[RMDB]
RNA sequence: GGGAACGACUCGAGUAGAGUCGAAAAUUUGGUCGCCCAGGGGAUGGAGACACGGAAAGGACAUCGUGUGCUAUAAGUCUGACGUAAGUCGAGCUUGCAACAUGGGUCUAUGCCUGGAUAAGUCACGUGCUUAAUCUCGCUUCGGCGAGAUUAAGCAAAAAGAAACAACAACAACAAC
Reactivity to 2A3 in 0.01 (KOAc 150mM, MgCl2 10mM, bicine 150mM(pH8.5), 24C), signal-to-noise 1, nucleotides 027 to 126: u100u000u020g070g010u000c030g020c000c000c000a000g120g000g000g030a060u070g100g000a050g040a040c000a020c170g060g060a000a120a110g090g030a000c000a000u020c060g000u000g060u000g000c030u020a000u030a240a020g000u000c000u010g000a060c000g150u200a090a090g060u060c000g010a000g000c000u000u060g000c040a090a060c000a000u010g000g000g000u060c000u010a020u110g000c030c000u040g030g110a010u140a200a040g000u000c000a000c000g040
Reactivity to DMS in 0.01 (KOAc 150mM, MgCl2 10mM, bicine 150mM(pH8.5), 24C), signal-to-noise 1, nucleotides 027 to 126: u000u000u000g000g090u000c050g000c000c010c000a230g020g000g030g000a070u000g050g000a150g000a020c000a000c110g000g000a100a110a180g000g020a020c000a030u000c090g100u050g000u000g000c020u000a120u000a000a030g070u010c000u000g000a030c000g000u030a180a150g000u000c050g010a030g000c020u000u000g050c100a010a040c020a010u010g000g050g000u060c030u000a120u000g000c020c000u000g040g050a180u020a040a060g000u000c030a030c160g080